Chemical mapping of a 207-nucleotide RNA with 2A3.
2A3 adducts were read by reverse transcription with SuperScript II with manganese.
For 2A3, 1,081 sequencing reads were counted.
Conditions: 150 mM KOAc, 10 mM MgCl2 and 150 mM bicine (pH 8.5), 24 C.
RNA sequence: GGGAACGACUCGAGUAGAGUCGAAAAUGAGACAAACACGCUUCACAAUGUGCGGCAAAGAAACAUUGUUUAUGCAAAGGCGCUUCGCAAUGUGUGCUCAAACAUUGCUUAUUCAAACACGCUUCACAAAAGAAUCAGUGGUUCGCCACUGAUUCAAGCGAGCUUUAUUGUUCGCAAUAAAGCUCGCAAAAGAAACAACAACAACAAC
Reactivity to 2A3 in 0.01 (KOAc 150mM, MgCl2 10mM, bicine 150mM(pH8.5), 24C), signal-to-noise 2, nucleotides 027 to 156: u210g000a030g020a050c040a030a140a010c090a030c030g000c000u000u000c000a020c000a000a000u020g000u010g000c000g050g050c030a030a100a100g030a000a070a010c000a000u000u000g050u040u100u070a110u080g050c060a080a090a060g120g000c010g000c030u030u050c020g010c010a000a000u000g000u000g030u040g060c050u150c240a030a010a000c000a000u000u000g000c000u000u050a080u010u140c030a060a110a000c020a010c090g090c070u100u070c060a060c090a140a130a070a030g020a000a000u000c000a000g010u000g000g070u020u030c240g010c110c000a000c000u000g010a010u010u000c000a000a000